[RMDB]
RNA sequence: GGGAACGACUCGAGUAGAGUCGAAAAGUGUACGACUACCUGCGGCUGUUGUAUGCGCGCGCGGGCACGCCGCACUGCCCGACCUGCGGGGAGCGAGUCGCGCGCCAAACCCCGCAACAAAUCGUCGCAUUUAACGACCAUUCGUGGUCGUUAAAUGAAAAGAAACAACAACAACAAC
Reactivity to DMS in 0.01 (KOAc 150mM, MgCl2 10mM, bicine 150mM(pH8.5), 24C), signal-to-noise 6, nucleotides 027 to 126: g020u000g030u000a060c040g010a030c030u010a200c250c050u000g010c010g010g010c100u010g030u000u010g010u000a110u000g020c080g020c030g010c040g020c030g010g010g000c030a070c050g010c020c030g000c050a080c120u000g000c000c020c020g020a090c210c150u010g010c010g010g010g010g010a110g010c080g000a110g020u010c000g000c020g010c010g020c010c070a050a120a110c020c300c000c010g020c000a020a040c070a030a110a160u000c080g000u000c050g010
Reactivity to 2A3 in 0.01 (KOAc 150mM, MgCl2 10mM, bicine 150mM(pH8.5), 24C), signal-to-noise 4, nucleotides 027 to 126: g030u040g040u080a020c010g020a010c020u060a040c020c050u020g000c000g020g000c060u100g030u300u060g070u150a080u140g030c060g000c010g010c010g000c000g050g090g020c040a020c040g070c010c000g030c010a040c060u080g060c000c020c020g080a150c040c060u090g030c010g010g000g000g020a060g040c020g010a030g050u060c010g000c010g000c000g000c010c000a000a020a050c010c000c000c010g020c020a030a030c030a000a060a020u100c040g030u020c030g000